An RNA of 177 nucleotides, treated with 2A3 and read out base by base. The data come from the RNA Mapping Database (RMDB), library OK1LIB. For 2A3 the reverse transcriptase was SuperScript II with manganese. The RNA was probed in 150 mM KOAc, 10 mM MgCl2 and 150 mM bicine (pH 8.5) at 24 C.
[RMDB]
RNA sequence: GGGAACGACUCGAGUAGAGUCGAAAACCCAAAAAUUUUCCGGUGGCCACCCGCCCGGGCCACCGACCCUCCACUCCACUCCUUCGGGACUGGUUUGGAGGAACAUAACAGGGCUAAAACAAAACAAACUACGAUUACUCUUCGGAGUAAUCGUAGUAAAAGAAACAACAACAACAAC
Reactivity to 2A3 in 0.01 (KOAc 150mM, MgCl2 10mM, bicine 150mM(pH8.5), 24C), signal-to-noise 2, nucleotides 027 to 126: c000c010c000a070a100a030a120a110u060u060u110u110c090c000g010g000u000g000g020c010c000a050c060c100c000g000c000c000c010g000g000g010c000c000a000c000c010g000a000c000c000c010u000c000c000a000c000u010c000c000a000c030u010c010c010u040u150c190g070g010g000a000c000u000g010g000u010u000u010g000g000a000g000g000a000a010c000a050u300a050a020c010a040g000g000g000c000u010a060a050a000a000c100a090a040a000a040c050a080a170